This 207-nucleotide RNA was probed chemically with 2A3 and DMS.

[RMDB]
RNA sequence: GGGAACGACUCGAGUAGAGUCGAAAAGGCCCCAGCUCUGAGACCCUGGGUCCUGCUGCCCCACCCCACACUGCCUGGUUCUUGGAGGAGACAGGAGGGAGAACCCCUUGGGGGACAGGAUUCCCUUCCAUAGGCAUGAGACUGUUGGGGGAGAGGAAAAUUACGGGUAGUUCGCUACCCGUAAUUUAAAAGAAACAACAACAACAAC
Reactivity to 2A3 in 0.01 (KOAc 150mM, MgCl2 10mM, bicine 150mM(pH8.5), 24C), signal-to-noise 1, nucleotides 027 to 156: g010g000c000c010c000c000a000g000c020u080c100u120g170a160g070a140c000c000c020u010g000g000g000u010c010c000u010g050c080u100g030c000c000c020c000a020c010c010c010c000a030c000a000c040u010g010c040c040u050g170g000u220u080c020u060u110g200g020a110g090g050a010g090a020c050a040g010g090a000g020g000g000a080g010a020a030c020c020c000c060u070u100g170g000g000g000g000a050c020a020g000g170a130u040u090c010c000c000u000u040c010c030a120u060a080g000g020c030a040u130g010a040g070a080c170u110g080u200u070g040g010g000g010g000a050g010a010g030g040a090
Reactivity to DMS in 0.01 (KOAc 150mM, MgCl2 10mM, bicine 150mM(pH8.5), 24C), signal-to-noise 1, nucleotides 027 to 156: g000g040c060c010c010c030a080g010c070u000c070u010g000a180g000a050c080c080c010u000g040g060g010u010c090c010u000g000c100u010g010c030c010c000c010a060c000c010c010c020a160c030a100c060u010g010c030c000u000g040g000u010u000c020u010u000g030g000a250g060g010a120g000a090c080a280g000g010a090g010g010g020a050g020a080a070c000c010c000c010u000u010g040g050g000g020g030a140c140a120g010g000a300u020u010c000c010c040u000u010c000c030a170u010a030g000g000c010a080u000g010a160g000a130c150u010g000u000u000g010g000g010g020g020a130g000a180g020g010a190
Notes: For DMS, 1,695 sequencing reads were counted. The reactions ran in a buffer of 150 mM KOAc, 10 mM MgCl2 and 150 mM bicine (pH 8.5), at 24 C. Reactivities are given for positions 27 through 156. 2A3 adducts were read by reverse transcription with SuperScript II with manganese. Reactivities are rounded to 0.1 and cut off at 0 and 3.